[RMDB]
RNA sequence: GGGAACGACUCGAGUAGAGUCGAAAAAUAAGGCGGUGGGGAGUGCCCAGCGGCCGACAGGAGUAAUUCCCGCCGAAACAGGGUUUUCACCCUUCCUUUCUUCGGGUGUCCUUCCUCGCGCCCGCAGCAUUCACAGUAACUUCGGUUACUGUGAAUGAAAAGAAACAACAACAACAAC
Reactivity to DMS in 0.01 (KOAc 150mM, MgCl2 10mM, bicine 150mM(pH8.5), 24C), signal-to-noise 2, nucleotides 027 to 126: a120u010a050a080g020g010c050g010g010u010g020g020g010g010a070g010u000g010c000c020c010a120g010c070g000g020c020c020g000a040c100a050g010g000a060g010u010a050a070u000u010c010c000c010g030c040c050g000a010a060a040c180a010g000g010g000u000u010u020u010c180a070c010c010c010u000u010c030c010u000u000u000c020u000u000c000g020g000g020u000g010u000c040c040u000u000c010c020u000c130g000c070g000c040c000c020g000c100a070g010
Reactivity to 2A3 in 0.01 (KOAc 150mM, MgCl2 10mM, bicine 150mM(pH8.5), 24C), signal-to-noise 1, nucleotides 027 to 126: a000u060a060a050g030g030c010g000g060u090g040g040g000g000a050g070u070g020c020c020c010a030g030c020g040g000c040c040g000a040c070a060g010g050a070g030u120a100a050u060u020c010c000c020g000c010c010g030a060a070a100c300a040g000g010g000u010u060u200u270c100a070c020c000c000u020u100c020c010u030u010u020c010u010u020c010g030g000g000u010g000u000c010c000u040u010c020c000u040c020g000c000g030c010c000c020g010c020a030g040